[RMDB]
RNA sequence: GGGAACGACUCGAGUAGAGUCGAAAAUUUUGUCGCUGCCUGGGCGAUUCUGGCGACGGUUAUCUGUGUGGUUGCCGGUGGUGUGGGCGUGUAUGCCACUGAGUAUGUGCUGGAACGCUACGGGCGGGAGCUGCCGCCGGAAUCGCUGGCCGUGAAGGCGUGGUGUAGUAUUCGUACUACACCACGCAAAAGAAACAACAACAACAAC
Reactivity to 2A3 in 0.01 (KOAc 150mM, MgCl2 10mM, bicine 150mM(pH8.5), 24C), signal-to-noise 3, nucleotides 027 to 156: u120u100u040u110g100u030c020g000c010u000g040c000c010u110g040g090g000c000g000a000u000u000c000u010g010g020c000g000a030c000g010g020u080u080a130u070c030u010g090u010g120u140g200g170u130u120g020c050c010g040g000u050g000g060u040g000u080g030g060g020c080g030u070g010u040a050u110g040c030c050a120c090u100g020a070g090u060a050u130g030u010g000c040u080g020g110a060a020c030g000c000u010a040c090g080g020g010c000g000g000g000a000g010c000u020g000c000c000g010c000c000g010g010a000a010u000c000g000c010u040g000g010c000c000g010u020g040a130a100g080